[RMDB]
RNA sequence: GGGAACGACUCGAGUAGAGUCGAAAAUCCUAAGUCACCUCCGAAUGCUGGAGCUUGGAUUUACCAACGGGAGCCUCGGAAACGAGGCGAGGAUCGUUGGUUGUCAGCUCCAGAGGUAGAGGUGAUAUGGAAAAACACUAUCGUUCGCGAUAGUGAACUCUCCUAACCUCUUCGGAGGUUAGGAGAGAAAAGAAACAACAACAACAAC
Reactivity to 2A3 in 0.01 (KOAc 150mM, MgCl2 10mM, bicine 150mM(pH8.5), 24C), signal-to-noise 1, nucleotides 027 to 156: u000c000c000u010a110a040g040u000c000a000c040c000u030c040c060g100a160a050u130g010c000u010g000g000a010g000c010u050u110g110g030a020u180u100u220a010c000c000a000a000c000g000g010g000a000g000c000c020u000c020g060g040a070a070a040c000g000a010g010g010c000g000a070g020g000a000u000c000g000u000u000g000g050u000u050g000u000c000a000g010c000u000c000c000a000g000a000g000g010u060a000g000a000g000g020u000g000a000u010a050u020g000g000a050a170a000a030a000c010a000c000u000a010u000c000g050u160u050c300g000c000g070a000u090a080g000u090g000a000a020